[RMDB]
RNA sequence: GGGAACGACUCGAGUAGAGUCGAAAAGAUAUGGAAAGCGAGGAUCGUAAGAGGGCGACGAAGUCGGAAACGACAGAGCCUGGUACGGGAGCUUUCCUAAGUCAAAAGCGGUAGUUCGCUACCGCAAGAUUCACUAGAUGUUCGCAUCUAGUGAAUCAAAAGAAACAACAACAACAAC
Reactivity to DMS in 0.01 (KOAc 150mM, MgCl2 10mM, bicine 150mM(pH8.5), 24C), signal-to-noise 6, nucleotides 027 to 126: g000a030u010a300u000g000g000a020a000a020g000c010g010a090g030g000a040u010c010g010u010a030a120g010a200g000g010g020c000g020a180c270g010a090a120g010u000c000g010g000a080a060a190c000g000a020c000a040g000a240g010c000c000u000g000g030u000a000c010g000g000g010a040g000c000u000u000u000c000c000u000a000a060g000u010c030a070a070a150a110g000c000g010g010u000a000g010u000u010c240g000c000u000a000c000c000g010c000a020a030
Reactivity to 2A3 in 0.01 (KOAc 150mM, MgCl2 10mM, bicine 150mM(pH8.5), 24C), signal-to-noise 5, nucleotides 027 to 126: g020a010u080a050u130g010g000a000a000a000g010c020g090a300g060g040a040u030c010g000u010a070a090g170a290g300g010g000c030g080a300c050g030a140a010g010u020c010g000g030a080a060a040c010g010a000c000a010g040a010g010c010c000u050g030g120u030a000c010g000g020g000a010g000c000u000u000u000c000c000u000a060a000g050u020c030a020a030a060a090g000c000g020g000u010a010g020u040u080c280g010c160u000a000c000c000g000c010a000a010